[RMDB]
RNA sequence: GGGAACGACUCGAGUAGAGUCGAAAAGGAGGGAUGAUCCUUCAGCGUCUGGCGCAGAUUGGCCAUGUCAGGAAUUUCGGGCGGCAGGUGCCAAUGCGCUGGCAAAGCCUCUGCGAUCAGCUGGGCCUGAUCGGCCCGUUCCGCCACCACGCCCAGAGAUAUUCGGUUUCUUCGGAAACCGAAUAUCAAAAGAAACAACAACAACAAC
Reactivity to 2A3 in 0.01 (KOAc 150mM, MgCl2 10mM, bicine 150mM(pH8.5), 24C), signal-to-noise 1, nucleotides 027 to 156: g030g020a000g000g010g060a150u130g050a110u300c010c000u020u020c040a030g020c040g090u040c110u070g010g000c000g000c000a010g020a180u140u180g050g020c040c030a040u050g000u020c050a030g000g220a090a040u050u140u300c070g000g040g010c000g030g000c050a050g060g000u080g060c000c010a040a070u140g040c130g030c000u010g020g000c000a030a030a060g020c030c030u020c040u070g000c030g060a150u090c020a010g020c030u070g000g030g000c000c000u120g000a180u090c050g050g000c030c000c000g000u070u000c000c010g020c000c010a050c030c000a010c040g020c020c020c020a020g070a000
Chemical mapping of a 207-nucleotide RNA with 2A3.
Conditions: 150 mM KOAc, 10 mM MgCl2 and 150 mM bicine (pH 8.5), 24 C.
For 2A3 the reverse transcriptase was SuperScript II with manganese.
Reactivities are given for positions 27 through 156.